About this RNA
This 177-nucleotide RNA was probed chemically with DMS and 2A3. The RNA was probed in 150 mM KOAc, 10 mM MgCl2 and 150 mM bicine (pH 8.5) at 24 C. It was measured as part of the RMDB library RFM100. Values cover nucleotides 27 to 126.
[RMDB]
RNA sequence: GGGAACGACUCGAGUAGAGUCGAAAAUAACUCACGAAGGGAGCUUGAAGUGGUUUCCUGGCCCUCGAAAUAAGCAGCAGAGGGGACGAGCGGUAUAGAAUACCGGUCUUGUGAACAUCAGAGGAUGGACAUGAGAGCGGUUCGCCGCUCUCAUGUCAAAAGAAACAACAACAACAAC
Reactivity to DMS in 0.01 (KOAc 150mM, MgCl2 10mM, bicine 150mM(pH8.5), 24C), signal-to-noise 2, nucleotides 027 to 126: u020a010a150c060u010c010a060c120g020a060a000g000g000g000a030g000c000u060u030g020a120a130g020u040g000g000u000u000u000c000c000u000g010g010c000c000c050u000c040g020a010a040a060u010a080a100g000c120a040g020c050a280g000a030g030g050g000g020a090c200g010a000g000c030g000g000u000a180u040a150g020a060a300u010a000c010c000g000g000u000c010u000u010g000u000g060a020a110c040a040u000c090a120g000a170g000g000a070u050g020
Reactivity to 2A3 in 0.01 (KOAc 150mM, MgCl2 10mM, bicine 150mM(pH8.5), 24C), signal-to-noise 2, nucleotides 027 to 126: u140a010a000c000u000c000a040c040g170a070a070g030g000g130a040g030c000u060u000g170a220a150g120u150g140g000u000u000u000c000c000u000g210g090c000c000c000u000c000g070a060a060a130u210a140a000g140c090a000g000c000a000g030a010g030g030g000g000a040c300g000a010g030c000g000g000u000a040u000a020g180a180a000u080a000c010c000g030g110u000c000u000u080g000u000g000a070a050c040a000u090c030a000g140a070g220g000a200u070g180